RNA sequence: GGGAACGACUCGAGUAGAGUCGAAAAUGCACAGCAGGAAGCACACUGGUAAGUGUGCCCGCUGUCCAGUCUUGGGCAAACAUGGUUCAAGAGCUCCUUUUCCAGGCUCUCACACUGCUAAGGACCCAGGUUAUUUCCAGGAUGGAAAGUAAGCACAAGCUAGUAUCGAUUUCGAUCGAUACUAGCUAAAAGAAACAACAACAACAAC
Reactivity to 2A3 in 0.01 (KOAc 150mM, MgCl2 10mM, bicine 150mM(pH8.5), 24C), signal-to-noise 3, nucleotides 027 to 156: u080g010c000a000c020a030g080c090a080g010g130a230a050g020c000a010c020a010c010u150g010g260u290a220a100g000u010g000u000g000c000c000c000g000c000u000g000u010c020c000a040g020u000c010u050u040g010g020g010c040a070a150a020c010a200u140g050g030u090u080c040a070a020g000a010g020c000u110c000c030u080u050u030u010c060c060a030g000g010c000u000c010u010c030a060c000a000c070u070g000c050u130a040a060g080g010a040c010c020c020a000g020g030u070u060a080u070u040u000c020c010a020g080g040a070u050g000g020a010a030a040g050u130a020a130g040c110a040c080a070
Reactivity to DMS in 0.01 (KOAc 150mM, MgCl2 10mM, bicine 150mM(pH8.5), 24C), signal-to-noise 1, nucleotides 027 to 156: u000g040c000a130c020a080g030c000a140g050g000a100a150g030c050a010c020a000c040u000g080g030u010a150a130g030u000g020u000g040c010c030c050g000c020u000g000u000c040c020a130g040u030c030u010u010g010g030g030c080a070a070a100c060a140u000g060g010u000u000c020a060a090g010a090g010c030u000c030c030u040u000u000u000c050c010a110g000g000c030u000c000u030c040a050c120a150c050u000g000c060u000a080a150g020g010a070c030c000c000a150g000g000u000u000a010u010u000u000c000c000a130g030g010a100u000g000g000a100a110a110g020u000a060a140g010c050a070c080a110